[RMDB]
RNA sequence: GGGAACGACUCGAGUAGAGUCGAAAAGAAAGAAAGAAAGAAGCCGGCUCUGCUAGUUUCACGGCAACCACGUUGAAAUUACAACGAAAGAAGCUCGCACUCAACUUCAACGGCCUAACGAGUGCAAAAAAGAAGUAUCACUUCGGUGAUACUUCAAGCAGUAAGUAAACUUCGGUUUACUUACUGCAAAAGAAACAACAACAACAAC
Reactivity to 2A3 in 0.01 (KOAc 150mM, MgCl2 10mM, bicine 150mM(pH8.5), 24C), signal-to-noise 2, nucleotides 027 to 156: g040a010a090a020g050a090a110a000g060a060a220a000g070a100a000g100c080c050g030g030c030u000c020u040g010c000u020a020g080u010u080u160c080a050c020g030g000c040a010a090c040c000a030c030g020u000u020g040a050a090a110u200u120a120c020a000a000c040g030a090a060a160g020a040a040g050c090u220c200g000c020a010c000u000c020a090a030c030u040u060c010a070a100c070g070g010c020c020u030a040a020c040g000a000g020u000g000c000a030a030a030a030a030a030g000a000a000g000u000a000u000c000a010c010u020u060c170g040g020u000g000a010u000a000c000u000u000c000a000a010